[RMDB]
Structure probing data (2A3 and DMS) for a 207-nucleotide construct.
Reactivities are given for positions 27 through 156.
The DMS profile rests on 2,753 reads.

RNA sequence: GGGAACGACUCGAGUAGAGUCGAAAACGUUGUCAUCGACAACACCCUAUGCAUUCAUGCUCUGUAAGGAUGCGCCGAAAGGUGAGCAAGCCCGAGUUGCCCGGACCUGAAAUGCAACACUUUAGAGAAAACCCGAAGCAGUUCGCUGCUUCGGGAAGAAUUACUAGAUCUUCGGAUCUAGUAAUUCAAAAGAAACAACAACAACAAC
Reactivity to 2A3 in 0.01 (KOAc 150mM, MgCl2 10mM, bicine 150mM(pH8.5), 24C), signal-to-noise 3, nucleotides 027 to 156: c100g000u000u010g010u010c080a240u120c300g020a000c000a000a000c010a060c010c000c010u050a050u070g000c000a000u000u000c020a050u180g000c000u000c000u010g010u020a000a010g000g000a000u010g010c000g000c000c000g070a120a020a010g030g000u020g010a010g000c000a000a020g010c000c030c010g140a110g030u020u010g010c040c070c050g020g030a100c030c110u120g040a100a110a110u080g000c000a030a010c010a060c050u120u210u260a120g020a020g000a080a130a030a040c000c000c000g000a000a000g010c010a000g010u080u180c190g030c140u000g000c000u000u010c010g000g010g000a000a000
Reactivity to DMS in 0.01 (KOAc 150mM, MgCl2 10mM, bicine 150mM(pH8.5), 24C), signal-to-noise 2, nucleotides 027 to 156: c090g000u010u000g000u000c050a150u050c080g010a070c030a040a030c020a110c030c020c030u000a070u000g010c010a080u000u010c080a160u000g000c020u000c080u000g020u000a300a160g020g010a030u000g010c030g050c050c020g000a120a130a140g020g010u000g000a120g000c040a160a070g000c020c000c030g000a090g020u000u000g020c040c050c030g090g020a030c030c060u000g040a120a080a100u010g030c070a050a150c020a070c090u000u010u020a060g030a190g000a120a090a050a140c000c010c010g040a020a000g000c010a060g030u000u000c300g020c020u010g020c000u000u000c000g010g020g000a000a000